[RMDB]
RNA sequence: GGGAACGACUCGAGUAGAGUCGAAAACCAGGGUCAACCUACGGAAAUCCCUGAGUUCCUCGGAUGUCCAGGCCGUCCCCUCUUCUAGAGAAGGGAGACUCCGGAACUUCUUCCAUGAUUGGGACGAUAACGAUAGGGUUCGCCCUAUCGAAAAGAAACAACAACAACAAC
Reactivity to 2A3 in 0.01 (KOAc 150mM, MgCl2 10mM, bicine 150mM(pH8.5), 24C), signal-to-noise 9, nucleotides 027 to 129: c010c000a000g020g000g010u170c070a120a140c030c010u110a070c140g030g020a050a080a050u060c010c000c000u020g030a050g040u020u010c010c000u010c030g010g010a040u100g040u030c040c050a100g040g040c040c020g050u020c010c000c000c000u020c010u100u040c060u130a120g030a030g010a200a090g040g010g010a070g020a030c020u000c020c000g010g030a040a040c000u100u050c010u090u010c030c020a090u160g030a180u140u150g020g000g010a010c020g030a040u060a150a040
Reactivity to DMS in 0.01 (KOAc 150mM, MgCl2 10mM, bicine 150mM(pH8.5), 24C), signal-to-noise 9, nucleotides 027 to 129: c030c000a070g000g000g000u030c090a080a200c030c030u030a060c130g000g040a070a090a110u010c000c000c000u000g040a090g040u000u000c020c040u000c130g000g000a060u050g000u030c020c060a080g010g000c080c040g040u000c010c000c000c010u000c000u030u050c110u010a110g010a070g020a080a030g010g000g010a090g010a050c020u000c050c040g000g000a070a070c100u030u030c050u020u020c040c040a050u030g000a110u040u030g010g000g030a120c040g000a070u000a110a150

Notes: The data come from the RNA Mapping Database (RMDB), library 15KLIB. This 170-nucleotide RNA was probed chemically with 2A3 and DMS. The RNA was probed in 150 mM KOAc, 10 mM MgCl2 and 150 mM bicine (pH 8.5) at 24 C. Reactivities are given for positions 27 through 129. For 2A3 the reverse transcriptase was SuperScript II with manganese. DMS adducts were read by reverse transcription with MarathonRT.